[RMDB]
RNA sequence: GGGAACGACUCGAGUAGAGUCGAAAAAGGCUGGGACUCCAUGUUGGAGGAACACUAGGGAAACCCUGGCCAAACACUGAAUUCUGCUUCGAGAUUCCAGGGGAUAGACUCAGGAGAGAAGGGCAGGCACAUACUGUUGGUUCGCCAACAGUAUGUGAAAAGAAACAACAACAACAAC
Reactivity to DMS in 0.01 (KOAc 150mM, MgCl2 10mM, bicine 150mM(pH8.5), 24C), signal-to-noise 4, nucleotides 027 to 126: a110g010g010c040u020g010g030g000a250c060u000c010c020a130u010g010u010u020g020g030a100g000g010a090a100c120a110c140u000a140g000g000g020a100a060a150c130c010c000u000g020g000c040c020a070a080a120c140a110c090u010g010a050a050u010u000c020u000g020c030u000u010c040g020a140g000a170u000u000c020c010a080g000g000g000g000a190u000a070g000a090c060u000c040a040g000g010a060g000a060g010a090a170g000g000g000c030a040g000g010
Reactivity to 2A3 in 0.01 (KOAc 150mM, MgCl2 10mM, bicine 150mM(pH8.5), 24C), signal-to-noise 2, nucleotides 027 to 126: a000g020g010c010u020g010g010g010a030c020u030c020c010a070u180g130u180u190g150g060a100g010g060a020a020c050a020c150u170a050g000g050g070a020a040a050c030c020c000u030g020g010c010c000a020a050a010c090a030c050u110g050a090a090u130u020c020u030g050c000u080u170c060g070a090g020a140u080u000c010c010a000g000g000g010g020a090u090a220g070a090c010u020c050a020g000g040a050g020a000g020a040a040g000g000g000c030a010g010g000
This 177-nucleotide RNA was probed chemically with DMS and 2A3.
2A3 adducts were read by reverse transcription with SuperScript II with manganese.
DMS adducts were read by reverse transcription with MarathonRT.
Source: RMDB library OK2TST, as collected in RNAgym.